[RMDB]
RNA sequence: GGGAACGACUCGAGUAGAGUCGAAAACACCUAAUGACCAUGCUAAUGCCAGAGCUUUUUCGCAUCUGGCCACAAAGUUAAUUGAACAAGAGGUUCCAGCCAACAUCACCAUCCUGGACGUGGGCAGAAUCUUCUCCUUGUUCGCAAGGAGAAGAUUAAAAGAAACAACAACAACAAC
Reactivity to DMS in 0.01 (KOAc 150mM, MgCl2 10mM, bicine 150mM(pH8.5), 24C), signal-to-noise 5, nucleotides 027 to 126: c160a160c020c000u010a060a110u020g000a100c060c050a090u020g010c060u020a120a110u010g000c010c020a010g010a020g010c030u010u020u040u010u030c190g020c000a100u000c000u010g000g020c000c210a020c130a050a100a100g000u000u010a100a140u020u010g000a090a080c090a090a050g000a070g030g000u010u010c030c030a050g000c040c020a050a080c080a080u010c040a080c030c050a100u030c070c060u000g000g000a030c110g000u010g000g000g030c100a070g000
Reactivity to 2A3 in 0.01 (KOAc 150mM, MgCl2 10mM, bicine 150mM(pH8.5), 24C), signal-to-noise 7, nucleotides 027 to 126: c080a050c000c000u070a130a090u080g060a030c000c030a030u080g010c030u110a130a030u150g000c000c000a010g010a010g020c030u140u130u060u140u180c070g010c060a240u000c000u000g000g000c000c000a010c000a010a060a000g020u070u100a090a100u120u170g110a080a030c040a070a040g090a070g110g000u050u020c010c000a010g010c010c010a030a050c010a090u050c010a000c050c000a040u080c000c020u020g020g030a020c020g020u050g000g020g010c010a020g060
Structure probing data (DMS and 2A3) for a 177-nucleotide construct. For DMS the reverse transcriptase was MarathonRT. The RNA was probed in 150 mM KOAc, 10 mM MgCl2 and 150 mM bicine (pH 8.5) at 24 C.